[RMDB]
RNA sequence: GGGAACGACUCGAGUAGAGUCGAAAACCGGAUGAAAGCAGUCUGAAACACUUCUUAGAAUAGAAGGACCGACGCGGAAAGCUGGAGCAAAGAGCGUUUGCUUCAAGGAAACUGACAGGUACAAAAAAGGGAGAUUAUUAUUCGUAAUAAUCUCCCUAAAAGAAACAACAACAACAAC
Reactivity to 2A3 in 0.01 (KOAc 150mM, MgCl2 10mM, bicine 150mM(pH8.5), 24C), signal-to-noise 9, nucleotides 027 to 126: c000c000g010g040a110u120g050a050a060a020g050c040a010g020u030c030u080g050a060a060a030c080a070c050u020u010c010u050u100a150g160a260a090u130a100g010a020a030g010g010a010c000c020g030a030c060g000c020g030g040a070a040a030g060c020u010g000g010a010g000c010a010a030a020g130a070g100c090g060u000u010u010g000c000u010u010c030a030a040g050g020a080a100a030c000u010g050a020c030a050g010g030u150a070c120a020a090a010a020a010
Reactivity to DMS in 0.01 (KOAc 150mM, MgCl2 10mM, bicine 150mM(pH8.5), 24C), signal-to-noise 7, nucleotides 027 to 126: c010c000g000g010a100u010g000a080a090a130g010c050a080g000u000c020u000g010a100a070a080c150a110c020u000u010c010u000u000a150g020a140a090u020a020g000a030a010g010g010a070c100c050g010a080c140g000c030g000g000a050a060a200g000c120u000g010g000a010g010c010a020a010a070g010a140g010c140g010u000u000u000g000c000u000u000c020a020a060g000g000a080a120a120c050u000g000a060c060a080g000g000u010a060c150a000a040a060a080a090